Chemical mapping of a 177-nucleotide RNA with 2A3 and DMS.
Source: RMDB library OK2TRN, as collected in RNAgym.
The RNA was probed in 150 mM KOAc, 10 mM MgCl2 and 150 mM bicine (pH 8.5) at 24 C.
DMS adducts were read by reverse transcription with MarathonRT.
For 2A3 the reverse transcriptase was SuperScript II with manganese.
Reactivities are given for positions 27 through 126.
[RMDB]
RNA sequence: GGGAACGACUCGAGUAGAGUCGAAAAAAGCCUGCGGGCCGGGAAGGUGUUUGUGGACUGGAGCCAGAACAGCGGCUCGAAGACCACCAUCGCGCCGUACUCACUACGUGGCCGGACGCAUCCGACCCCCUCUAAGAUCUUUCGAGAUCUUAGAGGGAAAAGAAACAACAACAACAAC
Reactivity to 2A3 in 0.01 (KOAc 150mM, MgCl2 10mM, bicine 150mM(pH8.5), 24C), signal-to-noise 2, nucleotides 027 to 126: a020a000g120c010c030u020g000c020g010g080g140c070c020g020g030g010a120a090g060g010u050g030u060u160u140g010u040g000g010a000c010u040g020g010a000g000c040c010a070g060a250a060c060a060g160c070g050g000c000u020c020g010a040a000g030a020c000c000a000c020c020a030u050c020g050c000g040c010c010g000u000a010c040u050c040a090c140u120a050c130g060u060g100g020c000c020g000g000a040c010g010c000a040u030c000c020g030a070c000c000
Reactivity to DMS in 0.01 (KOAc 150mM, MgCl2 10mM, bicine 150mM(pH8.5), 24C), signal-to-noise 3, nucleotides 027 to 126: a100a110g020c030c020u000g010c110g010g000g030c080c010g020g000g000a100a190g000g010u000g010u010u010u010g030u000g000g020a120c030u000g000g010a040g000c010c010a140g000a100a110c300a180g030c150g010g010c000u000c000g020a090a050g000a080c010c010a020c010c060a050u000c060g000c070g000c020c010g000u010a030c090u000c120a100c160u000a090c060g010u010g000g030c080c010g000g000a080c030g010c030a070u010c020c030g000a180c100c040